[RMDB]
RNA sequence: GGGAACGACUCGAGUAGAGUCGAAAAGGACUGCGCAGUCCGGCAACAUCAGCAGAGAGCCCGCUAUACGUGACGGAUUGGCUGAAGCGUACAGAAAUAUUGAUCCUCCUGCAAGAGGCAGCCAAGCAAAACGUACGUGAGUUCGCUCACGUACGAACGAAAUUGCUAAGUUCGCUUAGCAAUUUCGAAAAGAAACAACAACAACAAC
Reactivity to DMS in 0.01 (KOAc 150mM, MgCl2 10mM, bicine 150mM(pH8.5), 24C), signal-to-noise 2, nucleotides 027 to 156: g000g010a020c000u000g070c070g060c110a120g050u000c000c020g040g000c010a070a080c100a070u000c020a100g050c050a080g000a180g000a100g010c020c010c040g030c040u010a050u000a040c070g010u010g020a120c040g010g000a130u010u000g010g020c000u000g000a100a300g010c040g000u000a090c020a040g020a080a040a140u000a190u010u000g010a110u000c020c030u000c060c000u000g000c040a100a050g000a040g000g000c030a050g000c000c000a020a080g010c060a030a120a100a180c020g000u010a000c000g010u000g000a050g000u010u000c300g050c000u010c000a010c020g020u000a000c010g010a020a110
Reactivity to 2A3 in 0.01 (KOAc 150mM, MgCl2 10mM, bicine 150mM(pH8.5), 24C), signal-to-noise 5, nucleotides 027 to 156: g010g020a030c020u070g040c170g040c150a010g020u000c000c000g030g020c020a060a040c000a070u110c030a020g020c050a010g070a000g000a010g080c000c040c030g010c060u070a070u050a110c080g030u050g060a040c050g080g000a130u050u050g030g000c000u020g010a050a020g020c020g040u040a030c030a020g160a060a150a010u230a130u130u170g070a110u030c000c010u000c010c000u060g040c040a080a050g010a010g080g000c010a000g010c000c000a010a010g040c050a030a040a030a060c000g000u000a000c000g000u000g000a010g000u070u130c240g000c090u010c000a000c000g010u000a000c000g000a010a000